[RMDB]
RNA sequence: GGGAACGACUCGAGUAGAGUCGAAAAAUUAAGAUAUGGAAGUGACUCUCGACGAUCUACAUGGAGGCCUAUAUCGGAAACGAUAUAGGUGAAGUGUAGGGAGAGAGGAGCUUCCUAAGUCCGAUAAGUAGAAUAGAAUGUUCGCAUUCUAUUCUACAAAAGAAACAACAACAACAAC
Reactivity to 2A3 in 0.01 (KOAc 150mM, MgCl2 10mM, bicine 150mM(pH8.5), 24C), signal-to-noise 3, nucleotides 027 to 126: a000u260u190a060a010g000a010u030a000u060g010g000a000a000g000u030g060a050c000u000c000u000c030g300a300c010g010a210u000c000u000a000c010a010u060g050g140a080g300g040c000c010u000a000u000a010u010c000g000g000a000a030a000c000g010a010u010a000u000a020g030g000u020g000a000a000g010u000g000u000a000g010g020g000a030g000a000g000a000g000g010a000g000c000u010u010c000c000u000a000a000g000u000c010c010g050a090u080a300a090
Reactivity to DMS in 0.01 (KOAc 150mM, MgCl2 10mM, bicine 150mM(pH8.5), 24C), signal-to-noise 4, nucleotides 027 to 126: a110u010u010a180a080g000a010u010a060u020g000g000a020a000g030u000g000a300c010u000c010u010c010g010a130c300g000a070u010c010u000a010c000a000u010g000g010a230g020g000c000c000u000a000u000a000u000c000g020g000a000a010a030c000g000a020u000a000u000a000g000g000u000g000a060a290g000u010g000u000a000g000g000g000a010g000a010g010a000g010g000a300g010c010u010u000c000c000u000a000a080g000u000c010c040g000a140u010a070a130